[RMDB]
The record gives the reactivity of an RNA of 177 nucleotides to DMS and 2A3. Reactivities are rounded to 0.1 and cut off at 0 and 3. The RNA was probed in 150 mM KOAc, 10 mM MgCl2 and 150 mM bicine (pH 8.5) at 24 C. For 2A3 the reverse transcriptase was SuperScript II with manganese.
RNA sequence: GGGAACGACUCGAGUAGAGUCGAAAAAGCUCUCAAAGCUAGGAAGUUAACACUCUAUUAUCGGCAUCUGCAAUUUUUAUUGGCAAAGGCCCAUGAUGGAAUCCGCCAUUUCCAACUCAAUUUGCUGAUUUGAACAGCAAUUCGUUGCUGUUCAAAUAAAAGAAACAACAACAACAAC
Reactivity to DMS in 0.01 (KOAc 150mM, MgCl2 10mM, bicine 150mM(pH8.5), 24C), signal-to-noise 3, nucleotides 027 to 126: a070g010c090u010c060u010c080a080a150a050g010c050u010a070g020g000a060a040g000u010u020a060a100c080a080c050u000c010u010a020u000u000a030u000c250g010g020c020a040u000c050u010g000c040a070a030u000u000u010u000u030a060u030u010g020g000c040a030a040a050g000g010c030c030c070a030u000g000a050u000g000g010a020a060u000c090c100g000c070c080a050u000u000u010c020c010a040a100c080u000c140a060a070u000u000u010g000c070u000g000
Reactivity to 2A3 in 0.01 (KOAc 150mM, MgCl2 10mM, bicine 150mM(pH8.5), 24C), signal-to-noise 1, nucleotides 027 to 126: a000g000c000u000c010u050c000a120a090a010g000c040u060a030g040g010a050a010g050u120u060a040a030c010a020c020u020c000u060a010u130u030a020u120c050g000g000c000a020u020c050u040g000c000a020a030u120u030u000u110u200a130u130u120g060g000c010a050a060a060g090g020c000c000c000a000u050g030a030u070g030g060a070a010u000c070c050g000c000c000a020u060u020u000c000c010a020a050c010u050c070a040a300u100u040u110g000c050u050g000